[RMDB]
RNA sequence: GGGAACGACUCGAGUAGAGUCGAAAAAGGAGCAAAGAGACUUAAGUGCAUGUGAGCUGGUAAGCUCUAAAACUACCACAAAUAAAUAAACGCAAACAACGCAAAUUACGCUCCAGCUUACGCAAAAGUCGCGUAAGUUUAUCACACUUUUGGAGUCCUAUAUUGGGUGGUUCGCCACCCAAUAUAGAAAAGAAACAACAACAACAAC
Reactivity to 2A3 in 0.01 (KOAc 150mM, MgCl2 10mM, bicine 150mM(pH8.5), 24C), signal-to-noise 5, nucleotides 027 to 156: a000g020g000a020g000c030a070a080a050g110a030g010a050c010u090u090a090a050g040u040g060c050a060u080g060u020g090a020g010c020u020g010g060u080a160a040g000c010u010c030u050a050a030a010a010c010u020a020c000c030a020c050a060a120a030u210a070a120a010u170a070a100a010c070g000c080a040a100a080c060a070a000c050g000c070a080a070a060u150u080a060c060g000c010u000c000c000a000g010c000u000u000a000c000g000c010a070a130a080a080g120u190c070g020c000g000u000a000a000g000u010u010u020a030u030c010a020c010a030c100u090u100u080u100g040g010a020g010u010c010
Reactivity to DMS in 0.01 (KOAc 150mM, MgCl2 10mM, bicine 150mM(pH8.5), 24C), signal-to-noise 2, nucleotides 027 to 156: a110g000g010a080g050c000a070a110a160g000a100g000a080c040u010u010a030a070g000u000g000c060a130u020g000u020g020a110g050c040u020g030g030u000a120a110g020c010u050c020u030a060a080a100a090c010u010a050c010c020a050c090a050a100a070u000a060a080a090u010a050a140a050c030g050c030a030a070a140c050a030a020c030g000c040a050a110a080u000u000a050c110g000c000u000c030c040a120g010c000u010u000a000c020g020c020a060a100a120a110g030u010c200g060c010g010u010a010a050g000u000u000u000a030u000c040a030c030a040c080u000u010u000u000g000g020a100g030u000c040